The record gives the reactivity of an RNA of 207 nucleotides to DMS and 2A3. Values cover nucleotides 27 to 156. The reactions ran in a buffer of 150 mM KOAc, 10 mM MgCl2 and 150 mM bicine (pH 8.5), at 24 C.
[RMDB]
RNA sequence: GGGAACGACUCGAGUAGAGUCGAAAAAGUGCACUAGGUACGCCUAUUGCACAUUCCAGGACAUACUGCUGAGGAUGUCAAAAAUGCAGUUGGAGUCCUCAACUGGAUAGGCUACGGCCUAUCCAGAAAAAGACUUGGUUGUUCGCAACCAAGUCAACUAGACACAAGAGUUCGCUCUUGUGUCUAGAAAAGAAACAACAACAACAAC
Reactivity to DMS in 0.01 (KOAc 150mM, MgCl2 10mM, bicine 150mM(pH8.5), 24C), signal-to-noise 2, nucleotides 027 to 156: a140g000u000g000c000a020c070u000a010g000g020u000a070c300g060c020c010u000a010u000u020g000c020a020c010a170u000u000c000c030a200g000g000a060c020a110u000a070c030u010g010c120u010g020a160g020g020a110u010g010u000c020a020a080a090a150a130u000g010c040a110g010u010u020g000g000a190g000u000c010c010u020c030a060a120c000u000g000g000a010u000a000g000g000c000u000a100c280g120g000c000c000u010a000u000c000c000a030g000a020a030a090a160a110g010a000c000u000u000g000g010u000u010g030u000u020c300g000c040a030a030c000c000a020a000g010u000c000a000a060
Reactivity to 2A3 in 0.01 (KOAc 150mM, MgCl2 10mM, bicine 150mM(pH8.5), 24C), signal-to-noise 1, nucleotides 027 to 156: a010g000u010g010c000a000c000u000a000g000g020u040a010c170g040c020c010u030a020u010u000g010c000a000c000a010u020u020c010c010a000g000g020a000c000a030u200a050c020u020g020c010u040g030a100g160g160a300u260g270u300c090a020a030a050a020a050u130g020c000a010g010u020u040g080g060a100g020u020c000c000u050c040a030a180c010u000g000g000a000u000a000g000g000c000u040a010c260g020g000c010c000u000a000u000c000c000a000g030a000a000a000a000a000g000a010c000u000u010g010g000u010u010g030u050u130c230g020c100a000a000c000c000a010a000g010u000c000a000a010

The data come from the RNA Mapping Database (RMDB), library M2RFPK.
The DMS profile rests on 2,985 reads.
The 2A3 profile rests on 1,031 reads.